[RMDB]
RNA sequence: GGGAACGACUCGAGUAGAGUCGAAAAGAGCACGGCGCGGUGCGAGCGAUCCACCAGCACGGCAUCGGCUUGCCCCGCGCGUUGCUCGCCCAGCGGGUCGCCGUAAUGCCAGAUCGCACCCGCGUCGGCCUGACUCCAUCUUCGGAUGGAGUCAGGCAAAAGAAACAACAACAACAAC
Reactivity to DMS in 0.01 (KOAc 150mM, MgCl2 10mM, bicine 150mM(pH8.5), 24C), signal-to-noise 1, nucleotides 027 to 126: g000a020g000c000a100c130g040g020c000g000c010g040g010u000g000c030g000a010g000c000g010a020u000c010c130a080c060c060a110g020c110a050c250g000g000c150a020u000c010g000g040c030u000u000g000c000c050c000c020g020c010g030c000g000u010u000g000c000u000c000g000c000c000c000a220g010c020g000g030g020u000c090g010c040c080g000u000a070a120u020g010c080c160a160g000a050u000c160g020c020a110c010c010c050g010c040g010u000c200g020
Reactivity to 2A3 in 0.01 (KOAc 150mM, MgCl2 10mM, bicine 150mM(pH8.5), 24C), signal-to-noise 1, nucleotides 027 to 126: g030a010g000c000a010c110g140g000c020g050c000g040g010u050g040c050g010a010g040c020g010a000u000c050c000a030c000c080a090g140c120a070c140g000g020c010a000u020c020g300g080c010u020u060g020c060c000c000c020g000c060g000c010g040u050u010g030c010u000c000g010c000c020c000a020g010c000g000g050g000u130c150g040c140c000g020u100a180a040u190g130c060c030a090g000a140u050c020g010c010a020c000c000c000g000c070g030u070c030g100
Description
Chemical mapping of a 177-nucleotide RNA with DMS and 2A3. Conditions: 150 mM KOAc, 10 mM MgCl2 and 150 mM bicine (pH 8.5), 24 C.